[RMDB]
RNA sequence: GGGAACGACUCGAGUAGAGUCGAAAAUGUCCAGUCCCUCCCCGCUCCUGGAGAAGGGAGACUCGGGAACGCCUAGCAUCUGAGGGACGAAGCCGCCCCCGGGCGCUCCCCUCGGAGAUCCACUGGGACCAGCUAUAGGAUUCGUCCUAUAGCUGGUAAAAGAAACAACAACAACAAC
Reactivity to DMS in 0.01 (KOAc 150mM, MgCl2 10mM, bicine 150mM(pH8.5), 24C), signal-to-noise 1, nucleotides 027 to 126: u000g020u000c060c020a110g000u000c010c030c020u000c010c000c000c210g000c030u000c000c020u010g000g030a120g020a160a140g000g000g020a060g000a080c070u010c060g030g000g010a080a100c110g000c050c030u010a060g000c110a110u000c040u030g010a000g010g010g000a130c040g010a090a300g010c050c020g000c040c030c010c070c150g030g000g000c020g020c010u000c060c000c000c010u010c060g000g000a000g000a090u000c030c090a100c040u000g020g010g000
Chemical mapping of a 177-nucleotide RNA with DMS.